Structure probing data (2A3) for a 207-nucleotide construct. The RNA was probed in 150 mM KOAc, 10 mM MgCl2 and 150 mM bicine (pH 8.5) at 24 C. The data come from the RNA Mapping Database (RMDB), library OK3TST.
[RMDB]
RNA sequence: GGGAACGACUCGAGUAGAGUCGAAAAUGUGUUGGCAGGGAUUCUGUCUUGUUUGGUUCACUUCUAUAUCCCUGACACCUACAACAGUACCUGCCACAUAUUAGGCACUCACAUAUUUGCCUAAUAUGUGCCACAUAUUUGAAUUAAAGAAAACAUACACGAUAGCCAUGUUCGCAUGGCUAUCGUGAAAAGAAACAACAACAACAAC
Reactivity to 2A3 in 0.01 (KOAc 150mM, MgCl2 10mM, bicine 150mM(pH8.5), 24C), signal-to-noise 1, nucleotides 027 to 156: u070g000u010g000u020u120g000g000c000a020g000g020g020a110u260u000c040u030g050u050c170u060u020g070u040u100u170g080g000u000u110c110a030c050u220u140c190u130a300u110a230u220c030c000c000u000g030a010c010a010c030c000u000a010c000a000a000c040a040g000u000a020c000c000u010g020c050c020a000c000a000u010a000u000u000a000g000g050c040a010c030u190c100a050c030a130u130a150u070u080u080g000c000c010u000a000a010u000a000u000g010u030g060c040c000a010c030a010u110a090u030u020u030g160a110a110u110u190a120a040a040g110a090a110a040a000c010a030u130a050